[RMDB]
RNA sequence: GGGAACGACUCGAGUAGAGUCGAAAAACAUGGGAGUGCUGGCUGGACAAGCGUCUCAGCUAAAUGCAGUGGUUGACUUGCAAGACAGAAACACAGAAUUGUCAUAUCAACUCUUGCUUGAUUCUCUGGGAGACAGAACCAGAUAUUUCAGCAUGUGACCUCACACUUAUUUCGAUAAGUGUGAGGUAAAAGAAACAACAACAACAAC
Reactivity to DMS in 0.01 (KOAc 150mM, MgCl2 10mM, bicine 150mM(pH8.5), 24C), signal-to-noise 2, nucleotides 027 to 156: a120c000a130u000g000g010g010a090g060u000g030c000u000g010g010c030u010g010g010a120c060a090a190g000c130g010u000c030u000c030a110g000c120u000a040a050a050u000g040c040a030g030u000g000g030u000u000g030a030c020u000u010g000c030a090a200g000a120c070a140g020a120a100a100c070a060c080a100g010a150a150u000u000g010u000c060a160u010a140u000c020a000a090c020u000c010u000u000g020c000u000u010g000a020u000u010c150u010c040u000g020g000g000a060g000a200c110a060g000a090a140c010c000a100g020a060u000a040u000u010u010c030a100g000c060a070u010g000u010g000
Reactivity to 2A3 in 0.01 (KOAc 150mM, MgCl2 10mM, bicine 150mM(pH8.5), 24C), signal-to-noise 4, nucleotides 027 to 156: a000c040a080u090g030g010g030a080g010u080g040c050u030g040g020c020u040g020g020a030c030a100a090g040c050g080u020c030u030c030a050g030c040u060a060a040a050u030g010c010a000g010u010g030g040u030u050g030a040c010u020u100g010c050a070a060g020a040c040a020g120a070a150a000c150a020c020a110g140a140a130u140u070g030u060c010a030u040a040u190c040a030a040c040u020c010u070u020g020c000u050u120g020a040u130u030c030u010c000u060g000g050g020a060g050a080c080a070g040a040a020c010c000a000g020a030u040a110u040u150u070c010a010g010c010a020u040g060u050g090
Overview: An RNA of 207 nucleotides, treated with DMS and 2A3 and read out base by base. Values cover nucleotides 27 to 156. The RNA was probed in 150 mM KOAc, 10 mM MgCl2 and 150 mM bicine (pH 8.5) at 24 C. 2A3 adducts were read by reverse transcription with SuperScript II with manganese.